[RMDB]
RNA sequence: GGGAACGACUCGAGUAGAGUCGAAAAGAGGCCCUGCGCAGCGCGGCCGAUCCACUGCGGCCGAUCUGAGCGGCCGCGACUCGUGCGCCGAUCGCGCCUGAUCGAUGGCCGGAUCCGAUCGAUCGCGUCACCCACGAUCAUUCGUGAUCGUGGGUGAAAAAGAAACAACAACAACAAC
Reactivity to 2A3 in 0.01 (KOAc 150mM, MgCl2 10mM, bicine 150mM(pH8.5), 24C), signal-to-noise 1, nucleotides 027 to 126: g140a040g030g000c000c000c000u020g000c300g000c090a130g010c010g000c000g030g000c010c010g010a020u000c010c020a100c150u130g000c010g000g020c000c000g030a010u050c050u070g060a030g060c000g010g030c000c000g050c000g030a010c040u050c020g040u070g000c020g000c070c070g170a190u230c050g000c010g000c020c010u030g010a060u000c020g040a120u100g000g000c010c010g040g070a210u040c000c020g000a060u010c010g000a010u040c010g020c020g010
Reactivity to DMS in 0.01 (KOAc 150mM, MgCl2 10mM, bicine 150mM(pH8.5), 24C), signal-to-noise 2, nucleotides 027 to 126: g000a300g000g010c040c020c080u000g000c020g000c100a080g010c050g050c180g010g010c000c000g000a130u000c030c050a070c250u000g020c020g000g000c000c010g010a030u000c030u010g000a080g010c000g000g000c000c000g000c030g010a000c080u010c110g020u010g010c020g020c120c150g000a120u000c100g000c050g030c010c020u000g000a110u000c000g000a060u000g030g000c020c000g000g000a090u000c020c040g000a030u000c030g010a020u010c010g000c040g010